[RMDB]
RNA sequence: GGGAACGACUCGAGUAGAGUCGAAAAGAUAUGGAACAGGCCACUACCCACCGAUUGGUCGGAAACGACCAGUGUCGAGGUGGCUGUUCCUAAGUCAAAGGAUUCGUAACUUCGGUUACGAAUCCAACUACAGAUGACACUUCGGUGUCAUCUGUAGAAAAGAAACAACAACAACAAC
Reactivity to 2A3 in 0.01 (KOAc 150mM, MgCl2 10mM, bicine 150mM(pH8.5), 24C), signal-to-noise 1, nucleotides 027 to 126: g020a030u100a060u120g000g000a000a010c010a060g300g300c040c000a030c030u210a200c080c100c100a080c090c000g000a030u080u090g000g000u020c000g000g000a000a030a000c000g000a010c000c000a000g010u150g120u230c040g010a130g140g000u000g000g000c000u000g000u010u020c000c000u030a010a020g070u020c060a000a170a300g040g010a010u000u000c000g000u020a020a000c010u050u130c300g180g000u000u040a010c020g000a000a010u000c020c010a020a000
Reactivity to DMS in 0.01 (KOAc 150mM, MgCl2 10mM, bicine 150mM(pH8.5), 24C), signal-to-noise 2, nucleotides 027 to 126: g000a070u000a100u000g000g000a020a000c000a050g030g020c000c010a000c000u000a200c280c190c140a300c090c020g000a030u000u000g000g000u000c000g000g000a020a060a070c000g000a040c020c000a030g000u010g020u020c020g010a080g050g000u000g000g010c010u000g010u000u000c000c000u020a010a120g020u010c050a090a190a210g010g010a000u000u000c000g010u000a000a010c000u000u030c300g030g000u000u000a010c000g020a010a000u000c000c000a030a040

Description: Chemical mapping of a 177-nucleotide RNA with 2A3 and DMS. The reactions ran in a buffer of 150 mM KOAc, 10 mM MgCl2 and 150 mM bicine (pH 8.5), at 24 C. 2A3 adducts were read by reverse transcription with SuperScript II with manganese.